[RMDB]
RNA sequence: GGGAACGACUCGAGUAGAGUCGAAAACCACAUAUCUUCGGAUAUGUGGAAAUAAGGGAAACGCAUUAUUCCGGUCGACUCCGGAGAAACAAAGUCAAAUAAAAAGCAUCUUCUUCGGAAGAUGCAAGCUUUUCUAAGACUUCGGUCUUAGAAAAGCAAAAGAAACAACAACAACAAC
Reactivity to 2A3 in 0.01 (KOAc 150mM, MgCl2 10mM, bicine 150mM(pH8.5), 24C), signal-to-noise 2, nucleotides 027 to 126: c000c010a000c010a000u000a000u040c010u030u080c240g100g000a010u020a000u030g010u050g010g000a080a040a020u160a050a060g040g000g090a040a040a120c130g000c090a050u050u150a110u290u180c000c040g040g000u010c020g000a010c080u080c300c000g060g000a060g060a010a000a000c010a000a000a000g020u050c130a070a000a000u160a040a120a010a010a010g000c000a000u020c000u010u000c010u030u100c260g040g000a000a010g000a020u000g000c000a010a000